[RMDB]
RNA sequence: GGGAACGACUCGAGUAGAGUCGAAAAGCCAACGAAUCUGGAGAAAAGUCUUUAGACAUUGAAGAGUUGCUUAAGGAUGGCAAUUCAGAAGAUCCUGAGCUUGAUGUUGACCCGGAUGAUUUGGCCACCUGGCUCGAUAGUUCGCUAUCGAGCCAGGAAAAGAAACAACAACAACAAC
Reactivity to 2A3 in 0.01 (KOAc 150mM, MgCl2 10mM, bicine 150mM(pH8.5), 24C), signal-to-noise 3, nucleotides 027 to 126: g030c000c000a000a000c030g060a050a000u000c000u000g020g000a110g120a080a160a020a030g060u030c010u110u230u140a070g000a020c000a110u060u080g010a100a090g070a030g220u070u060g000c010u050u030a140a090g080g080a050u190g040g040c040a120a090u090u020c040a020g150a080a040g050a170u040c000c010u030g030a080g010c000u120u200g010a030u060g180u050u060g060a040c030c000c020g000g000a010u020g010a000u000u000u000g000g000c010c000a000
Reactivity to DMS in 0.01 (KOAc 150mM, MgCl2 10mM, bicine 150mM(pH8.5), 24C), signal-to-noise 1, nucleotides 027 to 126: g010c040c000a040a000c020g060a100a010u000c000u000g030g000a250g090a090a290a020a000g030u010c000u000u000u020a000g040a010c230a090u050u000g000a300a030g000a030g000u000u000g050c000u020u000a130a100g110g000a140u000g000g100c000a020a060u000u000c030a040g000a060a130g000a090u000c000c000u000g040a020g010c060u000u030g030a160u000g040u050u000g000a300c140c060c000g010g030a030u000g000a280u020u000u000g000g060c010c140a130

Structure probing data (2A3 and DMS) for a 177-nucleotide construct.
DMS (dimethyl sulfate) methylates the pairing face of unpaired adenines and cytosines.
Reactivities are rounded to 0.1 and cut off at 0 and 3.
Reactivities are given for positions 27 through 126.